[RMDB]
RNA sequence: GGGAACGACUCGAGUAGAGUCGAAAAUUCAACUCCGAGAGGAGUUGUCUCCCCUGUCAAACUCCAAACCUACGGACGCCGUCGACGCAGGGAAUCCGGUGUGCGGGGUAAGCCUGUGCACCGUGAGAGAUAACUACUGAUUCGUCAGUAGUUAUCUAAAAGAAACAACAACAACAAC
Reactivity to 2A3 in 0.01 (KOAc 150mM, MgCl2 10mM, bicine 150mM(pH8.5), 24C), signal-to-noise 9, nucleotides 027 to 126: u040u020c000a000a000c000u000c000c010g040a040g020a050g070g000a000g000u000u000g010u000c010u010c000c000c000c010u030g070u110c070a100a070a100c040u030c030c020a080a130a180c020c030u060a040c050g050g030a060c040g060c040c010g050u070c040g020a050c030g000c030a030g020g030g050a020a070u020c010c000g010g000u010g000u000g000c010g000g000g020g040u110a080a070g300c000c000u000g000u000g000c000a000c010c010g010u170g000a040g000
Reactivity to DMS in 0.01 (KOAc 150mM, MgCl2 10mM, bicine 150mM(pH8.5), 24C), signal-to-noise 9, nucleotides 027 to 126: u030u020c000a010a000c000u000c000c000g010a260g000a260g010g010a010g010u000u000g000u000c070u000c040c010c000c130u010g010u020c080a060a090a110c080u010c030c060a060a100a130c070c040u010a080c060g000g000a060c090g020c050c040g000u000c040g000a090c080g010c030a050g000g000g010a100a100u010c030c000g000g000u000g020u000g000c000g010g000g000g010u030a080a140g020c000c000u000g020u000g000c000a010c000c000g000u020g010a030g000